Source: RMDB library M2RFPK, as collected in RNAgym. An RNA of 207 nucleotides, treated with 2A3 and read out base by base. The reactions ran in a buffer of 150 mM KOAc, 10 mM MgCl2 and 150 mM bicine (pH 8.5), at 24 C. For 2A3 the reverse transcriptase was SuperScript II with manganese.
RNA sequence: GGGAACGACUCGAGUAGAGUCGAAAAGCUGCGUGAAACCUCGCUGUUUUCUUGGCUAACUUUCAGCGAGGUGAAGCAAGGCGGCAAAAAAAAGUUGGGAGCAGCAACGGCAAGCAAAAAAAAAGUUACAAGUUGCGAUGGUUCGCCAUCGCAACAACAUCUCCCUUUGGUUCGCCAAAGGGAGAUGAAAAGAAACAACAACAACAAC
Reactivity to 2A3 in 0.01 (KOAc 150mM, MgCl2 10mM, bicine 150mM(pH8.5), 24C), signal-to-noise 1, nucleotides 027 to 156: g000c000u010g010c000g130u100g060a160a020a000c000c000u000c000g020c030u000g000u010u000u020u000c060u190u260g140g000c080u020a010a010c000u000u000u000c000a000g000c010g000a000g000g000u000g000a000a000g000c030a000a040g010g020c020g030g010c000a090a000a000a050a140a000a000a000g060u080u060g000g020g030a080g030c020a010g010c000a010a050c030g070g000c020a000a050g000c040a060a030a070a000a000a050a000a000a000g010u010u020a030c020a140a050g000u000u010g000c030g000a000u000g000g040u000u060c190g080c100c000a000u000c000g000c000a000a000c000a000a000